[RMDB]
RNA sequence: GGGAACGACUCGAGUAGAGUCGAAAAUCACUGCUCAAAAUCAAGGUGGGUUUUAAAGCAAGAAUACCUUCAGCAUUGAGCAGCCGCAUAUAACCCACAUCGGGAAGCGCUUUCAAUGCAUCAGGAGGUUGGUGAUUGUAUUCGUACAAUCACCAACAAAAGAAACAACAACAACAAC
Reactivity to 2A3 in 0.01 (KOAc 150mM, MgCl2 10mM, bicine 150mM(pH8.5), 24C), signal-to-noise 1, nucleotides 027 to 126: u070c020a020c040u010g010c000u010c020a040a060a100a130u070c060a110a120g200g030u120g020g030g040u000u020u050u130a120a040a010g050c010a010a070g050a110a050u130a130c000c000u000u040c030a020g020c000a010u010u000g000a000g000c000a000g030c040c030g000c000a060u180a090u140a300a240c000c070c000a030c050a190u220c070g020g000g020a040a020g030c020g000c000u000u020u000c010a020a000u010g040c000a040u040c020a090g040g000a010g090
Reactivity to DMS in 0.01 (KOAc 150mM, MgCl2 10mM, bicine 150mM(pH8.5), 24C), signal-to-noise 2, nucleotides 027 to 126: u000c020a120c120u000g000c040u000c130a070a100a050a100u020c040a130a110g000g010u000g010g000g000u000u000u040u000a060a150a040g020c050a090a080g010a150a080u010a020c010c000u000u000c050a110g030c030a020u030u000g010a000g000c160a020g020c100c050g030c050a080u000a140u000a140a130c000c000c000a070c300a050u010c190g010g010g000a150a110g000c010g010c000u000u000u020c000a040a000u000g010c000a100u010c200a100g000g010a040g000